RNA sequence: GGGAACGACUCGAGUAGAGUCGAAAAUAUCAUACAUACUAAUUUUUAUUUCUGCUAAUCGUGUAGGUGUAACUAUAUCUCUAUUACAUUUGCCACAACAAUAUCCACUAUCAUGUAUAGGUGCAGGGUUGUGACCACCAUGCCAGUAGAUAUGACCUGAACAUGAAAGUUUCGACUUUCAUGUUCAAAAAGAAACAACAACAACAAC
Reactivity to 2A3 in 0.01 (KOAc 150mM, MgCl2 10mM, bicine 150mM(pH8.5), 24C), signal-to-noise 3, nucleotides 027 to 156: u100a020u060c040a030u100a150c030a050u150a110c100u070a160a220u090u080u030u110u190a170u090u100u070c030u070g030c020u090a090a110u160c070g050u050g000u110a030g010g050u020g030u010a090a030c110u030a030u070a120u250c040u000c030u090a070u090u080a030c000a040u060u040u070g020c020c010a040c000a090a060c020a050a130u050a050u170c010c020a050c040u050a060u110c040a100u180g120u140a070u060a070g000g020u040g040c020a010g000g100g000u040u020g010u030g060a060c000c020a020c010c010a000u060g030c000c000a010g020u030a020g020a040u030a040u080g070a010c010c140
Reactivity to DMS in 0.01 (KOAc 150mM, MgCl2 10mM, bicine 150mM(pH8.5), 24C), signal-to-noise 1, nucleotides 027 to 156: u010a040u030c040a100u030a120c040a130u000a200c060u000a050a060u010u020u010u000u000a060u020u030u010c040u000g010c030u000a100a060u000c040g040u000g050u010a060g030g000u010g010u000a010a120c100u000a040u000a100u010c040u000c070u010a130u000u000a020c000a080u000u010u000g010c000c040a040c000a030a050c020a030a080u010a030u000c020c020a040c010u000a060u020c090a130u010g000u010a070u000a020g050g020u000g000c060a120g010g060g030u030u000g030u010g020a080c010c050a060c070c020a000u000g000c040c080a100g030u000a060g010a090u000a060u010g010a140c110c090

Conditions: 150 mM KOAc, 10 mM MgCl2 and 150 mM bicine (pH 8.5), 24 C.
The record gives the reactivity of an RNA of 207 nucleotides to 2A3 and DMS.
Values cover nucleotides 27 to 156.
For DMS, 2,204 sequencing reads were counted.
2A3 is a SHAPE reagent: it acylates the 2'-hydroxyl of flexible nucleotides of all four kinds.
DMS adducts were read by reverse transcription with MarathonRT.
The data come from the RNA Mapping Database (RMDB), library OK3TST.